[RMDB]
RNA sequence: GGGAACGACUCGAGUAGAGUCGAAAAGAUAUGGAGGCGGUGACAGCAUCGAUCAUAUCUCGGAAACGAGAUAUGGGAGCUGGCACCCGCCUCCUAAGUCAAAACACUGUUGCUUCGGCAACAGUGAUCCGAAAUCACUGUUCGCAGUGAUUUCGGAAAAAGAAACAACAACAACAAC
Reactivity to DMS in 0.01 (KOAc 150mM, MgCl2 10mM, bicine 150mM(pH8.5), 24C), signal-to-noise 1, nucleotides 027 to 126: g030a010u000a300u000g000g000a040g000g000c010g000g000u000g000a010c010a000g030c000a300u010c150g010a080u000c010a010u000a010u000c000u000c000g000g000a120a160a240c010g010a000g000a010u000a000u000g010g000g000a010g000c000u010g000g000c000a010c090c010c010g040c000c000u000c000c000u000a000a080g010u000c050a150a060a170a210c030a010c010u010g040u000u010g010c030u000u000c270g010g000c000a010a000c000a010g000u000g010a010
The data come from the RNA Mapping Database (RMDB), library TTRDES. This 177-nucleotide RNA was probed chemically with DMS.